[RMDB]
RNA sequence: GGGAACGACUCGAGUAGAGUCGAAAAACUGACGGUACGCCGUCAGAACGGUAGAAAAGAUGGUUUGAAAACAACGCCUUCUACCAAUAUAGUAAAUAAAUAGGCGGAGCGGUCAUACGUGACCGCAAAAACAUCCUUGGCUUCGGCCAAGGAUGAACCAUUCAAAUCAGUUCGCUGAUUUGAAUGGAAAAGAAACAACAACAACAAC
Reactivity to DMS in 0.01 (KOAc 150mM, MgCl2 10mM, bicine 150mM(pH8.5), 24C), signal-to-noise 1, nucleotides 027 to 156: a110c020u000g000a030c020g030g030u020a080c300g080c000c010g010u010c020a000g010a020a030c160g030g020u000a000g000a010a020a020a020g000a040u010g020g000u020u000u000g020a100a140a070a060c040a170a020c020g010c020c010u000u000c020u010a000c020c000a050a130u000a130u000a100g030u000a080a060a110u000a080a070a100u000a070g000g010c010g000g010a180g000c010g030g030u000c010a100u010a080c190g040u000g010a050c010c000g010c000a000a030a020a060a040c000a010u010c010c000u000u000g010g010c000u000u010c300g040g020c000c000a000a020g030g010a010u010g000a010a090
Reactivity to 2A3 in 0.01 (KOAc 150mM, MgCl2 10mM, bicine 150mM(pH8.5), 24C), signal-to-noise 4, nucleotides 027 to 156: a000c000u000g000a000c000g000g010u060a020c140g020c020c000g000u000c000a000g000a040a010c050g010g000u010a010g030a020a050a020a030g060a150u150g050g070u070u120u160g110a150a100a010a010c040a050a010c020g000c000c000u020u000c000u000a000c000c000a030a000u170a010u040a020g060u040a010a020a120u090a070a060a030u130a060g010g010c010g020g020a040g000c000g000g020u000c020a010u030a150c190g060u030g000a010c000c000g000c000a010a000a000a000a000c000a000u000c000c000u000u000g000g000c000u030u040c160g050g000c000c000a000a000g000g000a000u000g000a000a010
Annotation
This 207-nucleotide RNA was probed chemically with DMS and 2A3. Values are in units of 0.01, from 0 to 300, in steps of 10. Conditions: 150 mM KOAc, 10 mM MgCl2 and 150 mM bicine (pH 8.5), 24 C.